[RMDB]
RNA sequence: GGGAACGACUCGAGUAGAGUCGAAAAGAGCUUAAUGCUAGAUAGAUGUCUAUGGACAUGACGUAUCCUACUUUAACUUGUUAGCGAAGUUAGAACAUGUUCAAUACGUAAAUUAUCUAGCAUCAUAGAUAGUAUUCUGAUUCGUUAGAGUGCUAUCAAAAGAAACAACAACAACAAC
Reactivity to 2A3 in 0.01 (KOAc 150mM, MgCl2 10mM, bicine 150mM(pH8.5), 24C), signal-to-noise 9, nucleotides 027 to 126: g110a020g030c080u130u190a060a000u020g000c000u000a000g000a010u010a000g120a050u090g040u050c070u130a140u050g050g000a000c000a000u010g010a020c080g090u070a090u080c020c020u030a040c010u050u050u030a110a070c030u070u100g110u240u190a040g080c080g110a020a010g020u040u060a030g040a060a020c010a020u020g010u010u020c020a090a080u080a060c060g060u080a040a100a080u080u010a000u000c000u000a000g010c000a000u010c000a000u020a020
Reactivity to DMS in 0.01 (KOAc 150mM, MgCl2 10mM, bicine 150mM(pH8.5), 24C), signal-to-noise 9, nucleotides 027 to 126: g010a110g000c060u010u010a110a030u000g000c010u000a010g000a010u000a010g010a040u020g010u010c040u020a080u030g010g000a010c000a010u000g000a140c110g010u010a070u010c090c060u000a070c080u010u010u000a030a030c030u000u010g010u030u050a140g020c270g000a020a010g010u000u000a010g010a060a160c060a030u010g010u000u000c070a050a040u000a010c090g010u010a050a060a080u040u000a010u000c000u000a000g000c000a010u000c170a060u030a100